[RMDB]
RNA sequence: GGGAACGACUCGAGUAGAGUCGAAAAGCAGAGUAUGAGACUAGCCCUACAAAAGAGGAAGAUCACAUAAUUUUUAAAUUGUAGUAAUUGUGGGGGUGGCUACCACCAGACUGACACUCAAGGCUACCAACUCUGGUCUAUUCGUAGACCAGAGUUGAAAAGAAACAACAACAACAAC
Reactivity to DMS in 0.01 (KOAc 150mM, MgCl2 10mM, bicine 150mM(pH8.5), 24C), signal-to-noise 2, nucleotides 027 to 126: g030c070a050g010a060g020u000a050u000g000a100g020a060c080u000a120g010c040c010c000u000a080c050a070a060a110a100g000a110g020g010a100a050g000a070u000c090a060c070a070u010a040a030u000u000u000u010u010a100a050a100u010u000g000u010a070g010u000a050a140u010u000g010u000g020g010g000g010g020u000g010g000c070u000a050c060c030a060c040c030a110g020a090c060u010g000a070c070a030c100u000c050a050a100g000g000c080u010a060c080
Reactivity to 2A3 in 0.01 (KOAc 150mM, MgCl2 10mM, bicine 150mM(pH8.5), 24C), signal-to-noise 2, nucleotides 027 to 126: g000c040a030g000a010g070u130a110u130g040a030g020a050c030u020a020g040c060c010c030u030a050c050a040a120a060a030g110a040g000g080a090a030g030a100u100c030a040c040a160u240a210a120u120u080u100u130u240a230a230a120u040u040g030u040a170g060u030a090a190u020u070g020u060g040g060g000g020g010u010g000g000c060u110a090c040c020a020c040c000a000g090a080c080u070g000a010c010a010c050u050c010a050a000g100g010c000u030a040c000

Chemical mapping of a 177-nucleotide RNA with DMS and 2A3.
The RNA was probed in 150 mM KOAc, 10 mM MgCl2 and 150 mM bicine (pH 8.5) at 24 C.